[RMDB]
Chemical mapping of a 177-nucleotide RNA with 2A3 and DMS. Conditions: 150 mM KOAc, 10 mM MgCl2 and 150 mM bicine (pH 8.5), 24 C. Reactivities are given for positions 27 through 126. The DMS profile rests on 2,244 reads. DMS adducts were read by reverse transcription with MarathonRT.
RNA sequence: GGGAACGACUCGAGUAGAGUCGAAAAUGAUAUUUUCGCAAAAUUUAUUUCGCCGUCCCACCCCAACUUGCAUUGUCUGUAGAAAUUGGGAAUCCAAUUUCUCUUUGUUGGGGCCCCGCCCCAACUCUGUAGUGAACACAUUCGUGUGUUCACUACAAAAAGAAACAACAACAACAAC
Reactivity to 2A3 in 0.01 (KOAc 150mM, MgCl2 10mM, bicine 150mM(pH8.5), 24C), signal-to-noise 3, nucleotides 027 to 126: u110g060a040u040a090u150u050u000u050c050g020c050a060a100a060a070u050u150u050a130u040u110u090c080g010c040c000g010u000c030c000c010a020c000c000c000c000a020a010c020u050u080g060c050a100u060u090g060u090c100u080g070u110a000g010a000a010a000u010u010g000g000g090a110a110u150c010c000a000a000u000u000u000c000u010c000u080u120u080g000u000u000g000g000g000g000c000c000c000c140g070c000c000c000c000a010a020c020u010c050
Reactivity to DMS in 0.01 (KOAc 150mM, MgCl2 10mM, bicine 150mM(pH8.5), 24C), signal-to-noise 2, nucleotides 027 to 126: u020g010a050u070a160u020u000u010u020c090g000c180a080a050a020a070u030u030u030a090u000u000u030c060g010c050c050g010u010c020c010c010a170c010c040c000c040a090a070c090u000u010g030c110a130u010u000g010u000c090u000g000u000a010g000a010a000a010u000u010g000g000g020a120a140u030c010c000a000a000u000u000u020c000u000c080u010u000u000g000u000u000g000g010g020g030c050c160c070c140g030c020c040c000c010a010a010c030u010c110
The data come from the RNA Mapping Database (RMDB), library RFM100.